[RMDB]
RNA sequence: GGGAACGACUCGAGUAGAGUCGAAAAUAGGCUAGCGAUCCAUGCAUGUCAUGCUAGCGUACUCAUGGUACGUACCUAGUAGUCGUACUGAGAGAGUCAUGGAUCACUCUGCGCGCGUCUAGCCAUGGUUGGAUUAUCGGUUCGCCGAUAAUCCAACAAAAGAAACAACAACAACAAC
Reactivity to DMS in 0.01 (KOAc 150mM, MgCl2 10mM, bicine 150mM(pH8.5), 24C), signal-to-noise 4, nucleotides 027 to 126: u010a130g010g000c010u000a010g000c090g000a010u010c020c000a010u010g010c050a130u010g000u000c050a120u010g000c020u000a020g010c150g010u000a030c010u000c150a150u010g020g020u020a070c130g010u010a060c120c020u000a040g010u000a100g000u010c180g020u020a010c010u000g000a130g020a050g010a120g010u010c010a020u010g000g020a040u010c020a100c180u000c100u000g010c060g010c060g010c100g010u000c020u000a020g000c010c010a090u000g020
Reactivity to 2A3 in 0.01 (KOAc 150mM, MgCl2 10mM, bicine 150mM(pH8.5), 24C), signal-to-noise 2, nucleotides 027 to 126: u150a030g020g020c000u000a010g020c010g040a010u000c000c000a000u020g020c000a040u100g040u110c000a010u050g020c020u020a000g000c020g010u010a030c010u050c080a160u270g120g020u070a040c030g010u010a020c000c030u020a060g030u040a030g050u030c070g030u080a030c010u060g010a020g010a000g020a010g080u120c010a030u000g020g000a020u000c010a020c030u100c060u110g060c060g000c020g010c020g040u000c010u010a010g030c010c020a040u090g120